[RMDB]
RNA sequence: GGGAACGACUCGAGUAGAGUCGAAAACAUAUGCGAGAUCAACAAGGAUGAUUGCAAACCGGGAGCAUGCCACAACAACGGCAGCUGCAUCGAUCGCGUUGGAGGCUUCGAGUGCGUCUGUCAGCCCCAAUUAAUGGACCUUCGGGUCCAUUAAUUGAAAAGAAACAACAACAACAAC
Reactivity to DMS in 0.01 (KOAc 150mM, MgCl2 10mM, bicine 150mM(pH8.5), 24C), signal-to-noise 5, nucleotides 027 to 126: c070a070u010a060u010g010c050g000a090g000a060u010c060a080a090c120a090a140g010g000a110u000g000a080u000u000g000c050a030a060a110c080c040g000g010g000a050g010c030a060u000g020c030c020a100c120a070a070c220a070a080c100g000g010c020a020g000c030u000g000c040a080u010c030g000a030u010c150g000c050g000u000u000g000g020a230g000g020c020u000u010c020g000a030g010u000g010c040g000u000c070u000g000u000c060a120g010c020c020c020
Reactivity to 2A3 in 0.01 (KOAc 150mM, MgCl2 10mM, bicine 150mM(pH8.5), 24C), signal-to-noise 2, nucleotides 027 to 126: c010a040u210a080u280g050c030g010a080g030a090u090c030a010a120c000a010a130g220g000a110u070g030a030u030u170g050c020a110a000a070c010c030g010g030g000a000g010c070a180u050g070c040c000a060c000a230a050c030a080a020c080g030g000c010a000g000c000u050g020c000a040u050c020g050a030u050c050g010c020g100u050u090g130g050a080g100g000c030u040u010c070g020a060g090u110g040c000g000u030c020u020g050u020c040a070g020c000c000c000

This 177-nucleotide RNA was probed chemically with DMS and 2A3. The DMS profile rests on 4,759 reads. For 2A3, 2,775 sequencing reads were counted. Conditions: 150 mM KOAc, 10 mM MgCl2 and 150 mM bicine (pH 8.5), 24 C.